[RMDB]
RNA sequence: GGGAACGACUCGAGUAGAGUCGAAAAGCACAAGACUUCGAACAUUAUAGCAGUUAGUAGUUGCCUAAACCCAUUCCAAUAUAUGGGACAGUAGAGGUCGCAAGCCUAUACUGUGCGGUGAACAUUCAAAAGGGAUGGUACUUCGGUACCAUCCCAACUUUAUGAUCGCGUUCGCGCGAUCAUAAAGAAAAGAAACAACAACAACAAC
Reactivity to DMS in 0.01 (KOAc 150mM, MgCl2 10mM, bicine 150mM(pH8.5), 24C), signal-to-noise 1, nucleotides 027 to 156: g030c020a160c090a080a160g010a090c030u030u030c000g000a130a090c040a200u000u000a000u020a100g010c040a100g010u000u000a150g010u000a130g010u000u000g050c000c080u000a100a100a070c030c010c000a070u000u000c040c050a150a150u000a160u000a050u010g030g020g000a070c050a020g000u000a080g020a060g150g090u000c000g000c230a130a250g060c000c020u010a030u000a010c030u000g030u000g000c090g000g020u000g010a070a080c070a110u000u000c050a090a020a120a200g010g090g030a060u000g000g080u000a000c010u000u000c300g040g040u000a000c000c040a000u010c020c000c000a000a000